Background
An RNA of 177 nucleotides, treated with DMS and 2A3 and read out base by base. For DMS the reverse transcriptase was MarathonRT. It was measured as part of the RMDB library OK2TST. The reactions ran in a buffer of 150 mM KOAc, 10 mM MgCl2 and 150 mM bicine (pH 8.5), at 24 C. 2A3 adducts were read by reverse transcription with SuperScript II with manganese.
RNA sequence: GGGAACGACUCGAGUAGAGUCGAAAAGGUUGGCUUCAUUACCAGCAAGGAAGGAAGAUCUGACUAUGGGUUUUAUGUUCAUGUCAGCACUAGAAGACAAAAUAGCUGUCUGUGAUCUGGAUCCAAACGUGCAGGAUAUUUUCGAAUAUCCUGCACGAAAAGAAACAACAACAACAAC
Reactivity to DMS in 0.01 (KOAc 150mM, MgCl2 10mM, bicine 150mM(pH8.5), 24C), signal-to-noise 3, nucleotides 027 to 126: g020g000u000u000g020g010c040u000u000c090a080u000u000a100c040c040a110g010c100a100a090g000g020a080a040g000g010a110a080g010a070u000c020u000g020a040c020u000a100u010g000g020g020u000u010u020u010a050u020g010u000u000c020a010u000g010u000c020a040g010c080a050c200u000a110g000a090a070g010a110c130a050a070a080a040u000a100g000c040u010g010u000c030u010g000u000g020a040u000c040u000g010g000a070u000c030c030a030a060a150
Reactivity to 2A3 in 0.01 (KOAc 150mM, MgCl2 10mM, bicine 150mM(pH8.5), 24C), signal-to-noise 2, nucleotides 027 to 126: g060g000u030u010g030g000c050u110u040c010a060u020u120a130c010c020a050g070c070a110a110g030g020a030a030g090g010a020a020g020a090u080c010u050g030a060c030u080a070u100g000g000g000u040u050u090u090a110u190g060u060u000c010a000u030g030u000c010a000g000c000a000c030u100a070g110a190a020g100a120c090a030a170a040a040u130a090g020c020u000g050u000c040u060g020u020g000a030u020c020u050g000g020a040u000c000c000a090a020a000